Source information:
The record gives the reactivity of an RNA of 177 nucleotides to 2A3 and DMS.
RNA sequence: GGGAACGACUCGAGUAGAGUCGAAAAGAUAUGGAUCGAUACGAGCUGAUGACCCACACCCAAGAUCCUGUAUAUCGGAAACGAUAUACAGGAUUGUAAGUGUGGCAAGGCUCGUCGAUCCUAAGUCCUUGCUUACUGUGUUCGCACAGUAAGCAAGAAAAGAAACAACAACAACAAC
Reactivity to 2A3 in 0.01 (KOAc 150mM, MgCl2 10mM, bicine 150mM(pH8.5), 24C), signal-to-noise 1, nucleotides 027 to 126: g050a020u160a070u290g000g010a000u010c030g010a020u080a300c030g000a010g000c000u060g000a300u210g080a300c020c050c010a010c010a000c010c000c010a100a000g010a010u000c000c000u000g020u000a000u000a020u000c020g010g090a060a040a100c030g000a030u000a010u010a020c000a000g000g010a000u000u000g000u000a000a000g000u000g020u020g000g000c020a120a090g000g020c000u000c010g000u010c000g000a000u000c000c000u010a100a000g010u010c030
Reactivity to DMS in 0.01 (KOAc 150mM, MgCl2 10mM, bicine 150mM(pH8.5), 24C), signal-to-noise 3, nucleotides 027 to 126: g010a070u020a300u000g020g000a020u010c000g020a110u030a130c120g010a020g010c000u000g000a060u020g000a140c300c010c010a010c000a000c000c000c010a280a300g000a000u000c000c010u000g000u000a010u000a020u000c010g000g000a080a140a170c010g020a010u000a000u000a000c000a000g000g000a000u000u000g000u010a300a300g000u000g040u000g000g000c020a020a110g000g030c020u000c000g000u000c000g020a000u000c000c020u000a030a040g000u000c030